[RMDB]
RNA sequence: GGGAACGACUCGAGUAGAGUCGAAAACACGAUUUCUUCGGAAAUCGUGAAAAGAGCUACCAAGGUUCCGCUAGCAAAGAUCGAAAGAUCAAAGGAACCAAAAAAGUUCGAACUUCGGUUCGAACAAGUACUUCUAAACGUUCGCGUUUAGAAGUACAAAAGAAACAACAACAACAAC
Reactivity to DMS in 0.01 (KOAc 150mM, MgCl2 10mM, bicine 150mM(pH8.5), 24C), signal-to-noise 3, nucleotides 027 to 126: c020a000c000g000a000u010u000u000c000u010u020c200g020g010a010a000a000u000c000g010u010g000a030a070a070a160g000a090g000c070u010a130c030c020a090a120g040g000u000u000c000c000g000c240u010a090g000c190a080a130a120g000a020u000c000g000a180a060a170g000a000u000c000a040a080a160g000g010a010a010c000c020a000a010a050a050a070a080g000u000u000c000g000a010a010c000u000u010c210g010g000u000u000c000g000a010a010c000a040a060
Reactivity to 2A3 in 0.01 (KOAc 150mM, MgCl2 10mM, bicine 150mM(pH8.5), 24C), signal-to-noise 1, nucleotides 027 to 126: c010a000c000g010a000u010u000u010c010u030u030c130g010g000a000a000a000u000c000g000u000g020a000a030a020a020g020a010g000c030u070a060c040c020a060a070g010g010u000u000c010c000g000c080u070a040g110c110a170a090a030g010a000u020c000g030a060a040a040g010a000u020c010a020a010a000g010g000a030a010c000c000a110a000a040a000a070a000g000u000u010c010g000a000a000c010u050u120c300g080g000u010u010c010g000a000a000c000a010a020
About this RNA
An RNA of 177 nucleotides, treated with DMS and 2A3 and read out base by base. For DMS, 2,264 sequencing reads were counted. High DMS reactivity at an A or C suggests that its Watson-Crick edge is free. The 2A3 profile rests on 2,182 reads. Conditions: 150 mM KOAc, 10 mM MgCl2 and 150 mM bicine (pH 8.5), 24 C. The data come from the RNA Mapping Database (RMDB), library M2PK50. For DMS the reverse transcriptase was MarathonRT.